[RMDB]
RNA sequence: GGGAACGACUCGAGUAGAGUCGAAAAGAGAAGGUGCGUCGGCGGCGGAUGCAGCGGAUCGCGCGGGCGCGGCUCGGUGUAGAGAACACCCGUGACCGCGAGUACGAUGUGGUGCCGUCGCGGCUGCGCGUGCCAAUACGUUCGCGUAUUGGCACGCAAAAGAAACAACAACAACAAC
Reactivity to 2A3 in 0.01 (KOAc 150mM, MgCl2 10mM, bicine 150mM(pH8.5), 24C), signal-to-noise 2, nucleotides 027 to 126: g020a000g080a060a040g110g030u160g070c040g030u130c040g130g050c000g020g020c000g010g070a090u080g030c000a020g000c030g020g050a080u030c050g000c000g050c020g060g040g000c030g010c000g000g000c040u080c090g020g080u160g020u120a270g030a050g030a130a000c020a030c030c020c050g000u010g020a020c000c000g000c000g000a000g050u020a000c000g010a020u000g010u040g070g160u120g020c000c010g000u000c010g020c000g000g010c020u020g000c030
Reactivity to DMS in 0.01 (KOAc 150mM, MgCl2 10mM, bicine 150mM(pH8.5), 24C), signal-to-noise 2, nucleotides 027 to 126: g020a130g000a120a140g000g010u020g000c030g010u000c030g030g040c000g010g030c010g020g010a140u000g000c010a020g020c000g000g000a080u000c000g000c000g010c010g020g010g010c000g020c010g010g010c140u030c100g000g040u000g040u020a070g010a170g020a080a090c000a070c260c010c020g000u010g000a040c010c020g000c010g000a040g020u000a120c020g010a020u000g040u010g020g010u000g060c010c010g010u000c010g010c030g000g020c000u010g030c080